[RMDB]
RNA sequence: GGGAACGACUCGAGUAGAGUCGAAAAGAAAAUCCAUUCCGCCGAAAGGGCAAAGGUUCCUUGGCAAUGUUCGUCAGCCGAGGGUUAGCCGAUCCUAAGGUCACCCCUAACAGGAAGUGAUCGAAAGUACUAACCUCAUCUUCGGAUGAGGUUAGUAAAAAGAAACAACAACAACAAC
Reactivity to DMS in 0.01 (KOAc 150mM, MgCl2 10mM, bicine 150mM(pH8.5), 24C), signal-to-noise 3, nucleotides 027 to 126: g000a090a040a070a050u060c040c030a210u050u010c030c020g020c070c030g030a040a040a090g030g000g020c090a020a060a240g040g020u010u000c000c010u020u000g000g000c000a060a060u050g000u020u010c090g000u000c050a240g010c000c010g000a010g000g000g000u040u050a070g000c000c010g000a160u000c000c000u000a090a100g000g000u000c000a020c020c010c000c000u000a110a150c270a180g030g000a120a110g010u000g010a000u000c000g000a070a050a060g010
Reactivity to 2A3 in 0.01 (KOAc 150mM, MgCl2 10mM, bicine 150mM(pH8.5), 24C), signal-to-noise 3, nucleotides 027 to 126: g040a000a050a020a000u050c020c020a090u090u060c030c060g010c030c030g090a150a100a080g040g010g000c130a080a090a010g000g010u050u040c000c000u010u000g000g000c090a100a130u070g030u120u180c190g120u110c080a120g220c040c010g000a020g000g000g040u100u140a000g010c010c010g010a040u060c000c000u060a170a080g000g000u010c020a010c000c000c000c020u030a080a030c030a050g010g020a140a140g020u000g010a000u060c010g020a110a080a000g090